[RMDB]
RNA sequence: GGGAACGACUCGAGUAGAGUCGAAAAAGCAAAGGGACCCGGCGGAAACUCGGUAUCUCCGUGUGCGUGUCCCGCGUGCAUAACGCAUGUACAGAUGCACACAUACAAAACGAACAAUUUCCUCGCAUGUGUAACAAGUCUUCGGACUUGUUACACAAAAAGAAACAACAACAACAAC
Reactivity to 2A3 in 0.01 (KOAc 150mM, MgCl2 10mM, bicine 150mM(pH8.5), 24C), signal-to-noise 2, nucleotides 027 to 126: a000g070c030a030a070a090g030g000g000a010c020c060c040g020g020c030g040g000a050a090a080c110u120c140g160g090u210a150u030c160u000c020c020g000u020g060u120g180c050g000u070g000u040c000c030c010g000c000g000u000g100c000a020u050a180a050c120g000c060a020u030g030u100a050c000a060g110a080u080g010c020a010c050a000c000a020u190a010c070a010a110a200a110c060g140a010a010c070a130a170u010u030u040c000c040u050c030g060c050a130
Reactivity to DMS in 0.01 (KOAc 150mM, MgCl2 10mM, bicine 150mM(pH8.5), 24C), signal-to-noise 2, nucleotides 027 to 126: a060g010c040a020a090a140g020g060g010a050c250c030c000g050g000c080g020g000a020a060a080c030u010c150g030g000u000a110u030c030u000c050c180g000u000g000u010g090c040g050u020g020u000c010c030c000g030c050g080u000g000c050a050u000a080a080c270g040c030a060u000g010u000a100c140a110g000a060u000g000c000a040c040a030c100a060u010a110c260a030a050a110a080c130g000a040a080c120a080a130u010u000u000c010c000u000c150g010c150a110
This 177-nucleotide RNA was probed chemically with 2A3 and DMS. High DMS reactivity at an A or C suggests that its Watson-Crick edge is free. DMS adducts were read by reverse transcription with MarathonRT. The 2A3 profile rests on 881 reads. Source: RMDB library OK2TRN, as collected in RNAgym. The RNA was probed in 150 mM KOAc, 10 mM MgCl2 and 150 mM bicine (pH 8.5) at 24 C.